[RMDB]
RNA sequence: GGGAACGACUCGAGUAGAGUCGAAAACGGGAUUGAGUUCAGCGCGGGCAGGCCCAACACGCUGUGUUGCACAUAGUCGUCGUAGCUGUCGAACGCCCCGGGUGUGCUGCCGGUGAACGACGUGAACGUCGUAACCAGCAUUCGUGCUGGUUACGACAAAAGAAACAACAACAACAAC
Reactivity to 2A3 in 0.01 (KOAc 150mM, MgCl2 10mM, bicine 150mM(pH8.5), 24C), signal-to-noise 2, nucleotides 027 to 126: c050g000g000g080a060u090u170g060a110g020u080u040c020a020g060c120g040c020g180g000g000c030a030g050g040c020c000c000a000a020c020a010c040g160c120u040g010u020g000u100u200g090c060a030c020a110u170a040g060u120c030g000u000c040g010u030a000g000c030u030g050u090c020g000a070a040c060g070c020c000c030c030g000g000g000u130g050u040g060c040u020g020c000c000g030g030u060g040a080a020c010g010a000c010g110u090g060a100a010c080
Reactivity to DMS in 0.01 (KOAc 150mM, MgCl2 10mM, bicine 150mM(pH8.5), 24C), signal-to-noise 4, nucleotides 027 to 126: c050g010g000g020a090u000u010g020a160g010u000u000c060a040g010c040g020c050g000g020g010c040a050g010g030c030c050c030a090a070c090a050c080g010c080u000g010u000g020u010u000g020c150a280c050a080u000a080g000u010c020g010u000c060g010u000a130g010c040u010g010u000c100g010a060a120c080g020c030c030c050c050g010g000g040u000g010u000g020c070u000g010c040c020g000g000u010g010a060a080c020g000a050c070g000u010g000a080a110c210